Chemical mapping of a 207-nucleotide RNA with DMS and 2A3. The 2A3 profile rests on 1,102 reads. 2A3 adducts were read by reverse transcription with SuperScript II with manganese.
[RMDB]
RNA sequence: GGGAACGACUCGAGUAGAGUCGAAAAAUCGCCUUCAUAGACAAGGCAUCCUACGUAUUCCGUAGGUAUCUGAAGAUAUACGGAUUCAGCAUCACUUUCCGCAACCUUUGCCCAGACUUCGAAUUUGUGCGGCAUCUGCAUGCUCUGAACGUAGAAAAUUGAGACCGAUUUUCGAAUCGGUCUCAAUAAAAGAAACAACAACAACAAC
Reactivity to DMS in 0.01 (KOAc 150mM, MgCl2 10mM, bicine 150mM(pH8.5), 24C), signal-to-noise 1, nucleotides 027 to 156: a060u000c130g020c010c000u000u010c050a200u000a150g010a210c090a070a040g030g000c000a070u010c000c000u000a010c030g020u020a160u010u010c090c000g070u000a040g010g030u000a010u000c040u000g010a120a240g050a100u000a110u010a050c050g000g010a100u000u050c090a010g030c030a030u010c040a050c050u000u000u010c000c000g010c040a070a100c040c000u010u000u010g040c020c010c010a210g000a000c150u010u000c040g040a060a070u000u000u000g120u000g040c100g010g000c070a010u000c010u000g120c170a040u000g020c020u010c040u010g020a020a100c040g000u010a010g000a030a070a090
Reactivity to 2A3 in 0.01 (KOAc 150mM, MgCl2 10mM, bicine 150mM(pH8.5), 24C), signal-to-noise 3, nucleotides 027 to 156: a000u090c050g020c020c010u010u000c080a140u180a190g080a110c130a040a000g000g000c000a060u110c010c010u020a000c000g090u100a160u250u160c120c010g000u040a030g050g050u050a120u030c080u100g080a160a020g000a030u040a030u020a090c010g030g030a050u030u000c020a030g020c020a000u000c060a010c020u040u050u050c020c020g020c040a090a140c020c030u050u070u110g010c010c000c050a090g030a280c050u090u070c120g090a160a080u150u180u210g070u050g030c000g000g000c010a020u040c030u030g000c020a010u010g000c010u040c040u060g040a000a010c020g010u000a010g090a000a150a000